[RMDB]
RNA sequence: GGGAACGACUCGAGUAGAGUCGAAAACGCUUUUAGUUCCAAAACCUGAUGGGAGGUACCGUUGACAACUGGAGCCAACAGAGGCAUUGGAUGUAGAUCCCUUCAGUGGCACUGUUUGGCCAAAAUACCAAAGUAAGUUAUUCGUAACUUACUUUGGAAAAGAAACAACAACAACAAC
Reactivity to 2A3 in 0.01 (KOAc 150mM, MgCl2 10mM, bicine 150mM(pH8.5), 24C), signal-to-noise 9, nucleotides 027 to 126: c040g020c050u070u090u060u210a050g010u070u040c020c000a030a050a060a100c030c030u080g050a110u140g090g020g030a040g020g030u050a070c010c040g040u030u080g060a050c030a090a020c100u090g120g040a030g040c000c000a010a000c010a020g030a050g080g000c000a010u010u030g010g020a020u030g040u090a080g020a190u090c020c010c000u010u010c010a040g010u020g060g030c020a010c050u020g080u160u060u080g010g000c010c020a010a030a020a050u140a050
Reactivity to DMS in 0.01 (KOAc 150mM, MgCl2 10mM, bicine 150mM(pH8.5), 24C), signal-to-noise 9, nucleotides 027 to 126: c110g020c120u010u000u000u010a110g010u000u000c020c020a090a080a110a110c070c040u010g010a100u010g010g010g010a050g010g010u000a060c090c040g010u000u000g010a070c100a050a070c090u010g010g010a160g010c010c010a020a030c020a030g010a110g010g000c020a030u000u000g000g010a030u000g010u010a130g000a090u010c140c020c040u000u000c030a030g030u000g000g010c010a110c010u000g000u000u000u000g020g000c000c050a040a050a050a080u010a170
Notes
Chemical mapping of a 177-nucleotide RNA with 2A3 and DMS. The RNA was probed in 150 mM KOAc, 10 mM MgCl2 and 150 mM bicine (pH 8.5) at 24 C. The data come from the RNA Mapping Database (RMDB), library OK2TST. DMS adducts were read by reverse transcription with MarathonRT. The 2A3 profile rests on 24,046 reads.